[RMDB]
RNA sequence: GGGAACGACUCGAGUAGAGUCGAAAAGGUCUAGUACUUAAUGAUACAUUCCUUCGCCAGCUCAUAAUAAGAAAAAACAGAAGGAUCUCUAUAGGAAGCAAAUCGGAAUUUGAUGAUGAGUUUGCGCCCUUUAACGAUAGUUCGCUAUCGUUAAAGGAAAAGAAACAACAACAACAAC
Reactivity to 2A3 in 0.01 (KOAc 150mM, MgCl2 10mM, bicine 150mM(pH8.5), 24C), signal-to-noise 6, nucleotides 027 to 126: g010g000u010c040u080a060g030u060a070c040u100u190a120a090u210g080a040u010a070c020a040u010u040c000c000u020u040c020g010c000c010a020g000c020u010c020a060u040a170a020u120a180a050g110a060a130a020a010a010a010c050a020g060a080a020g070g010a030u000c020u000c020u080a140u130a190g110g070a080a020g000c050a060a030a060u050c030g030g050a100a110u070u060u120g050a050u040g010a010u020g010a010g050u000u030u030g020c010g000c000
Reactivity to DMS in 0.01 (KOAc 150mM, MgCl2 10mM, bicine 150mM(pH8.5), 24C), signal-to-noise 5, nucleotides 027 to 126: g010g000u000c020u000a110g020u010a060c070u000u010a100a130u010g010a130u000a040c050a110u000u000c000c000u000u000c040g010c010c020a030g010c020u000c020a040u000a070a080u010a100a110g020a010a050a050a070a070a150c120a090g010a080a080g010g010a060u000c040u000c060u000a140u010a080g010g010a050a070g000c070a030a060a040u000c040g000g000a060a140u000u010u000g000a100u000g010a080u010g000a070g000u000u000u000g020c040g000c160

This 177-nucleotide RNA was probed chemically with 2A3 and DMS. Source: RMDB library RFMREP, as collected in RNAgym. The reactions ran in a buffer of 150 mM KOAc, 10 mM MgCl2 and 150 mM bicine (pH 8.5), at 24 C. For DMS the reverse transcriptase was MarathonRT.